[RMDB]
Record summary
Conditions: 150 mM KOAc, 10 mM MgCl2 and 150 mM bicine (pH 8.5), 24 C. The record gives the reactivity of an RNA of 207 nucleotides to 2A3. It was measured as part of the RMDB library M2RFPK. For 2A3 the reverse transcriptase was SuperScript II with manganese. The 2A3 profile rests on 491 reads.
RNA sequence: GGGAACGACUCGAGUAGAGUCGAAAAGUUUAUGCAAAGGCACUUCGCGAUGUGUGCUCAAACAUUGCUUAUUCAAACACGCUUCACAAUGUGCGACAAAGAAACAUUGUUAUAAGAGCUAAUGUUUACCACGCCUAAAGGUUCGCCUUUAGGCGAAGCCCUAAGUGGAGUUCGCUCCACUUAGGGCAAAAGAAACAACAACAACAAC
Reactivity to 2A3 in 0.01 (KOAc 150mM, MgCl2 10mM, bicine 150mM(pH8.5), 24C), signal-to-noise 1, nucleotides 027 to 156: g090u110u130u050a090u060g020c010a020a130a150g050g000c050a060c080u150u080c100g000c060g180a110u150g010u000g010u000g010c050u040c000a020a020a000c010a000u020u020g000c000u000u090a170u130u170c000a060a120a060c140a000c070g010c000u000u010c010a000c000a020a010u020g000u010g000c000g120a180c170a070a160a000g030a000a100a000c020a000u000u000g030u090u070a130u010a020a160g040a000g030c030u070a090a060u020g010u090u000u000a110c090c020a030c000g040c000c000u020a000a000a000g000g000u040u080c020g070c020c000u030u020u000a000g000g000c000g000a000a000